RNA sequence: GGGAACGACUCGAGUAGAGUCGAAAACUUUGCACAAAACAUCGCAUUAUUGUAUGCAGUUUGUGAACAAACUGCUUGAAAAAACUUUUUUCGCAAAUUGAUAUUUGCUGCAAAAAGUUUUUAUGGGAACACAAACGAAAUUCGUUUCGUUUGUGUUAAAAGAAACAACAACAACAAC
Reactivity to 2A3 in 0.01 (KOAc 150mM, MgCl2 10mM, bicine 150mM(pH8.5), 24C), signal-to-noise 9, nucleotides 027 to 126: c020u050u060u160g020c040a020c030a050a120a150a060c040a140u120c090g010c040a030u050u110a150u170u300g100u150a060u110g010c000a010g010u000u010u000g070u070g100a120a030c020a020a040a010c020u070g040c000u060u080g080a040a030a000a000a010a010c030u030u030u010u010u030u030c010g000c000a010a020a030u050u160g140a040u030a050u300u030u000g020c060u070g020c030a010a000a000a000a000g000u010u000u000u010u030a120u110g050g010g080
Reactivity to DMS in 0.01 (KOAc 150mM, MgCl2 10mM, bicine 150mM(pH8.5), 24C), signal-to-noise 6, nucleotides 027 to 126: c050u000u010u010g010c040a060c060a040a050a070a090c100a070u020c120g010c040a040u000u020a110u020u010g010u010a040u010g010c000a060g000u000u000u000g010u020g020a170a160c050a020a030a030c080u010g010c010u010u010g000a000a030a020a010a010a010c010u010u010u000u000u000u000c170g000c000a000a000a010u000u020g010a140u020a060u000u000u000g000c020u020g030c090a010a010a010a010a010g000u000u000u000u000u000a060u030g010g000g010